[RMDB]
An RNA of 177 nucleotides, treated with 2A3 and DMS and read out base by base. Values are in units of 0.01, from 0 to 300, in steps of 10.

RNA sequence: GGGAACGACUCGAGUAGAGUCGAAAAGAAGAUGCGCAUUACCCGCGACAGGACGGAAAGACCCCGUGGAGCUUUACUGUAGCCUGAUAUUGAAUGUCUGUGCAGCUUGUACAGGAUAGGUGGGAGCAUCCUGUCCCAAAUUCGUUUGGGACAGGAUAAAAGAAACAACAACAACAAC
Reactivity to 2A3 in 0.01 (KOAc 150mM, MgCl2 10mM, bicine 150mM(pH8.5), 24C), signal-to-noise 2, nucleotides 027 to 126: g030a030a030g020a040u110g030c030g000c050a010u030u200a120c050c000c000g020c010g010a030c030a020g000g060a000c020g020g000a020a050a010g040a040c030c010c020c090g080u160g030g030a060g030c010u080u020u120a110c050u080g040u140a090g020c000c010u010g030a040u080a080u220u220g060a150a060u160g000u040c020u000g020u010g000c000a050g100c080u180u140g010u010a020c030a000g050g020a040u050a020g020g020u050g010g010g010a030g010c000
Reactivity to DMS in 0.01 (KOAc 150mM, MgCl2 10mM, bicine 150mM(pH8.5), 24C), signal-to-noise 4, nucleotides 027 to 126: g000a130a110g010a050u000g000c010g000c070a070u000u000a140c030c040c020g010c080g010a120c070a030g000g010a090c050g020g000a050a060a060g010a050c030c040c050c180g020u010g020g010a130g010c020u000u000u010a070c050u010g020u000a070g010c010c010u000g000a110u000a110u010u010g000a080a070u000g010u010c030u000g010u000g020c000a100g010c180u000u010g030u000a030c050a030g000g000a050u000a050g020g020u000g010g010g000a130g010c130
It was measured as part of the RMDB library OK2TRN. The RNA was probed in 150 mM KOAc, 10 mM MgCl2 and 150 mM bicine (pH 8.5) at 24 C.